[RMDB]
RNA sequence: GGGAACGACUCGAGUAGAGUCGAAAAUAACGUUUCGACGUUAGGGGGCCGUAGGACCUUUUGACGCUAUUAUCCCUCGAAGAACUGCGUUCGAAAGAGCGCAGGGAGAGGUGUAUAGCGAUAAGGUCCUAAACGGAGAAGGGCACUUCGGUGCCAACAAUGUGUGUAAGUUCGCUUACACACAUUGAAAAGAAACAACAACAACAAC
Reactivity to 2A3 in 0.01 (KOAc 150mM, MgCl2 10mM, bicine 150mM(pH8.5), 24C), signal-to-noise 5, nucleotides 027 to 156: u030a020a010c010g010u040u090u140c270g110a030c010g010u030u030a030g000g000g000g020g000c000c000g010u020a000g020g000a000c000c000u000u040u050u150g180a090c020g000c000u000a010u070u040a050u210c030c030c000u030c020g190a290a040g010a010a010c000u000g000c000g000u000u010c010g040a090a070a040g000a000g000c010g000c000a010g000g000g010a020g000a000g000g010u030g010u050a010u000a000g000c000g000a010u010a030a000g000g000u000c000c000u000a000a020a010c000g010g020a070g070a090a100g040g000g000c010a000c000u020u070c300g090g000u000g000c000c000a000a010
Reactivity to DMS in 0.01 (KOAc 150mM, MgCl2 10mM, bicine 150mM(pH8.5), 24C), signal-to-noise 3, nucleotides 027 to 156: u010a020a030c040g010u000u010u020c180g040a050c000g010u000u000a050g020g010g020g020g070c010c010g010u000a080g010g020a030c000c000u000u000u000u000g010a210c050g050c000u000a010u000u010a110u000c120c010c000u010c010g010a210a250g020a090a210c010u010g010c000g040u010u000c000g000a160a140a300g010a010g010c000g040c000a010g000g010g010a090g000a000g020g020u010g000u000a030u010a040g030c000g030a110u000a040a030g020g020u000c000c000u000a000a010a060c020g020g020a130g000a110a120g010g010g000c010a030c010u010u000c260g070g000u000g000c000c000a040a120